[RMDB]
An RNA of 207 nucleotides, treated with DMS and 2A3 and read out base by base.
The reactions ran in a buffer of 150 mM KOAc, 10 mM MgCl2 and 150 mM bicine (pH 8.5), at 24 C.
DMS adducts were read by reverse transcription with MarathonRT.
For 2A3, 3,363 sequencing reads were counted.
RNA sequence: GGGAACGACUCGAGUAGAGUCGAAAAAGUGUGGCAAUUCCUCAAAGACUGAAAAACAGAAAUACCAUUUGACCCAGGAAUCCCAUUACUGGGAAUAUACCCAAGAGAAUGUAAAUCGUUCUAUUUUAAAGACACAUGCACGUGUAUGUUCAGUGCACACGUGAUAUUAUUUCGAUAAUAUCACGUGAAAAGAAACAACAACAACAAC
Reactivity to DMS in 0.01 (KOAc 150mM, MgCl2 10mM, bicine 150mM(pH8.5), 24C), signal-to-noise 3, nucleotides 027 to 156: a100g040u000g030u000g020g030c030a070a070u000u000c030c020u000c080a070a110a130g000a300c070u000g000a050a050a050a080a120c050a100g000a060a020a080u000a040c040c020a080u000u010u010g010a180c020c020c000a080g000g000a100a110u000c020c020c000a090u010u000a200c090u010g000g010g000a100a080u000a060u000a060c000c010c010a080a140g000a110g000a030a060u010g020u000a060a080a120u000c040g010u010u000c020u000a100u000u000u000u000a060a080a090g010a100c060a080c120a070u000g000c030a060c060g000u010g010u000a030u020g010u000u010c050a100g030u000g010c040a200
Reactivity to 2A3 in 0.01 (KOAc 150mM, MgCl2 10mM, bicine 150mM(pH8.5), 24C), signal-to-noise 5, nucleotides 027 to 156: a000g090u090g000u080g010g020c010a030a060u050u050c020c010u040c040a050a060a040g070a040c050u080g050a080a020a040a040a040c040a040g070a030a130a020u110a070c030c020a080u070u020u110g060a030c000c020c020a000g000g040a030a100u150c020c000c010a050u100u130a050c050u030g000g000g050a010a000u050a010u020a030c030c020c010a050a010g050a010g000a160a010u050g010u150a110a090a110u210c020g020u040u000c020u020a150u060u190u060u170a110a180a010g070a010c020a000c010a030u020g020c010a000c020g040u050g040u050a140u110g120u130u120c040a000g010u000g000c000a000
Notes: The DMS profile rests on 5,078 reads.